[RMDB]
Source information: Source: RMDB library ARCHII, as collected in RNAgym. This 207-nucleotide RNA was probed chemically with 2A3 and DMS.

RNA sequence: GGGAACGACUCGAGUAGAGUCGAAAACUCCGUGCAUCGCCCAUGUGCUACGGUAAGGGUCUCACUCUAAGUGGGCUACACUGGCUAAUCUCCGUCUGAGGUUAGUUGGAAGAGCUUAAUCAGACUAGCUGAAUGGAAGCCUGUUACCGGGCCGAUGACACAAUAAUAGUUUCGACUAUUAUUGUGUAAAAGAAACAACAACAACAAC
Reactivity to 2A3 in 0.01 (KOAc 150mM, MgCl2 10mM, bicine 150mM(pH8.5), 24C), signal-to-noise 8, nucleotides 027 to 156: c020u000c000c000g000u010g010c000a020u020c030g010c010c010c010a030u040g020u030g010c040u100a050c010g000g040u070a050a100g070g000g050u030c020u020c030a080c020u130c040u070a090a050g030u020g010g010g000c000u020a010c030a010c020u010g010g000c000u000a020a020u040c010u030c060c090g130u040c070u080g000a010g000g010u030u010a010g000u010u020g020g010a060a040g010a000g040c070u170u190a060a030u090c020a020g020a040c030u060a040g080c070u090g080a120a080u100g060g060a060a030g010c000c000u070g110u220u110a110c090c040g010g000g000c020c020g070a080u160g010
Reactivity to DMS in 0.01 (KOAc 150mM, MgCl2 10mM, bicine 150mM(pH8.5), 24C), signal-to-noise 4, nucleotides 027 to 156: c020u000c000c010g030u000g000c020a040u000c060g020c010c020c030a090u000g020u000g010c020u010a040c030g020g010u010a090a130g010g010g000u000c030u000c050a080c100u010c080u020a070a080g120u000g010g000g000c010u000a180c070a210c000u000g010g020c000u000a020a020u010c000u000c020c170g020u000c070u000g020a060g030g030u000u000a000g030u000u000g020g010a120a160g000a170g010c070u000u000a120a080u000c050a060g010a090c050u010a130g000c040u000g000a110a100u010g010g010a110a050g020c010c000u000g020u000u010a110c100c040g010g010g000c040c020g000a150u000g010
2A3 adducts were read by reverse transcription with SuperScript II with manganese. For 2A3, 11,735 sequencing reads were counted.